[RMDB]
The data come from the RNA Mapping Database (RMDB), library OK2TST. This 177-nucleotide RNA was probed chemically with DMS. The reactions ran in a buffer of 150 mM KOAc, 10 mM MgCl2 and 150 mM bicine (pH 8.5), at 24 C.
RNA sequence: GGGAACGACUCGAGUAGAGUCGAAAAAUGGCUGCGAAUGUCCCGAACAGAAAGGAUCCCAAGGCCACUGAGGAGAUCCUCAAGAAGGUAGUGGACGACAAGUCCCGAGAACUUCAGGACGGCGUUGCGCCCAUUCUUACUUCGGUAAGAAUGGGCGAAAAGAAACAACAACAACAAC
Reactivity to DMS in 0.01 (KOAc 150mM, MgCl2 10mM, bicine 150mM(pH8.5), 24C), signal-to-noise 1, nucleotides 027 to 126: a070u000g010g000c010u000g000c110g010a060a140u020g000u020c030c040c000g030a030a110c210a140g020a110a070a010g000g000a020u020c020c000c020a070a150g000g000c010c000a070c120u020g020a300g030g000a080g000a020u000c000c000u000c080a090a210g000a040a020g000g000u000a090g010u030g020g000a050c000g010a090c210a110a150g020u000c000c000c050g030a070g000a090a090c080u000u000c040a090g000g000a030c050g000g000c140g020u000u000g000